This 207-nucleotide RNA was probed chemically with DMS and 2A3. For 2A3, 2,028 sequencing reads were counted. For 2A3 the reverse transcriptase was SuperScript II with manganese. As a SHAPE reagent, 2A3 marks flexible, mostly unpaired nucleotides at the ribose 2'-OH. For DMS the reverse transcriptase was MarathonRT. It was measured as part of the RMDB library M2RFPK.
[RMDB]
RNA sequence: GGGAACGACUCGAGUAGAGUCGAAAACAAUGCAGGUUAAGCCAAAGGGAUGUCCCGACCGGAGGCCGACAAUCCAGGGAACCGGAUGUCAUCACGUUGUUGCAGUACCAGAUGCCAUCUUAAAUCCAAAAGAACACAUAGUUCGCUAUGUGUUCAACAAAUAUUUGAACUUCGGUUCAAAUAUUUGAAAAGAAACAACAACAACAAC
Reactivity to DMS in 0.01 (KOAc 150mM, MgCl2 10mM, bicine 150mM(pH8.5), 24C), signal-to-noise 2, nucleotides 027 to 156: c030a070a090u010g020c100a080g000g020u010u010a050a110g000c000c010a020a300a300g000g050g020a070u000g000u000c010c000c000g000a250c020c000g020g000a300g010g010c030c040g030a110c060a080a100u010c060c070a060g010g000g030a160a200c060c030g000g010a090u020g000u000c030a110u000c030a140c140g000u000u000g000u000u000g030c010a080g010u020a020c040c060a110g010a090u000g020c020c020a020u010c030u000u000a040a050a070u000c040c030a040a050a100a180g020a010a020c000a020c000a000u000a010g000u000u000c300g040c010u010a000u000g020u000g000u000u000c000a030a120
Reactivity to 2A3 in 0.01 (KOAc 150mM, MgCl2 10mM, bicine 150mM(pH8.5), 24C), signal-to-noise 2, nucleotides 027 to 156: c070a010a160u220g020c030a030g150g050u120u100a060a020g000c000c010a020a000a060g020g000g000a030u040g040u050c000c000c000g020a020c000c000g010g000a020g000g000c000c000g010a020c010a090a100u080c090c070a020g020g010g000a040a060c050c040g030g000a000u010g020u040c020a020u030c020a010c090g040u040u010g010u030u060g040c080a070g060u090a070c060c010a020g000a020u030g000c020c000a000u010c000u060u120a090a090a060u060c030c000a080a050a000a040g010a010a000c000a000c010a000u010a020g030u060u060c170g050c100u000a000u010g020u000g000u000u010c000a000a000